The record gives the reactivity of an RNA of 207 nucleotides to 2A3 and DMS. For 2A3 the reverse transcriptase was SuperScript II with manganese. The data come from the RNA Mapping Database (RMDB), library OK3TST. The reactions ran in a buffer of 150 mM KOAc, 10 mM MgCl2 and 150 mM bicine (pH 8.5), at 24 C.
RNA sequence: GGGAACGACUCGAGUAGAGUCGAAAAAGCAGAUGGGCAAAGCCACGGUAGAUGGCAUUCAGCUGCGCUUUACCGGCUCUAUCCAGCGUGACGAUACCGGGGAAGUGCAGGCCGUGGAGCUUGUGGUGCGUGGACGUCACAAAGAAGUGGAUUCCGGUGCUUAGAAUUUAUUCGUAAAUUCUAAGCAAAAAGAAACAACAACAACAAC
Reactivity to 2A3 in 0.01 (KOAc 150mM, MgCl2 10mM, bicine 150mM(pH8.5), 24C), signal-to-noise 4, nucleotides 027 to 156: a000g010c000a000g010a020u050g000g020g000c030a040a040a020g020c020c000a010c010g010g040u060a070g040a190u110g070g010c080a080u120u130c030a110g030c000u010g000c010g020c000u000u000u020a040c000c000g020g000c040u040c030u110a060u020c020c020a060g120c120g190u230g060a020c030g030a040u060a150c000c010g000g030g010g020a010a010g020u000g000c000a010g020g000c000c010g030u090g030g030a070g040c030u130u110g050u080g060g020u020g010c010g010u040g020g010a020c020g020u050c010a020c010a030a090a010g030a020a010g040u010g040g000a020u060u000c010c010g030g030
Reactivity to DMS in 0.01 (KOAc 150mM, MgCl2 10mM, bicine 150mM(pH8.5), 24C), signal-to-noise 2, nucleotides 027 to 156: a100g030c020a030g000a080u000g010g020g010c060a090a080a150g030c010c000a020c010g030g020u010a090g010a130u000g020g020c050a080u000u000c020a090g000c020u010g000c010g050c030u010u000u000a060c010c000g000g020c120u000c120u010a090u000c040c030a180g030c130g030u010g020a040c090g020a200u000a040c010c000g020g000g010g020a030a040g010u000g000c000a040g020g020c040c030g000u010g010g000a150g010c040u000u000g010u000g020g030u010g020c040g020u000g000g010a070c040g000u000c000a040c070a080a020a120g000a100a130g010u000g000g010a250u000u000c010c000g000g010